[RMDB]
RNA sequence: GGGAACGACUCGAGUAGAGUCGAAAAUAAUUUUGCUGCGACCAAUCCCAAAUGAAGUGUUUGGGUUCCUCAAGAAGAUAGCUUAGCAUGUUAUUUUAAAUCUAUCGUGAAGGAGUGUGUGUAUACCCGCCAGACAUUUAUUCGUAAAUGUCUGGCGAAAAGAAACAACAACAACAAC
Reactivity to DMS in 0.01 (KOAc 150mM, MgCl2 10mM, bicine 150mM(pH8.5), 24C), signal-to-noise 1, nucleotides 027 to 126: u010a050a080u000u000u000u000g000c020u000g000c080g000a110c070c170a130a160u000c010c000c000a030a010a010u000g010a130a080g020u010g010u000u000u000g000g010g030u000u000c050c050u010c130a060a140g000a130a140g000a040u000a060g000c080u000u010a070g020c070a040u000g010u000u000a030u030u010u010u010a060a110a100u000c050u010a040u000c080g030u000g040a150a110g010g000a090g010u000g010u010g020u000g000u000a050u000a170c060c040
An RNA of 177 nucleotides, treated with DMS and read out base by base.
The reactions ran in a buffer of 150 mM KOAc, 10 mM MgCl2 and 150 mM bicine (pH 8.5), at 24 C.
DMS adducts were read by reverse transcription with MarathonRT.
It was measured as part of the RMDB library OK2TST.
Values are in units of 0.01, from 0 to 300, in steps of 10.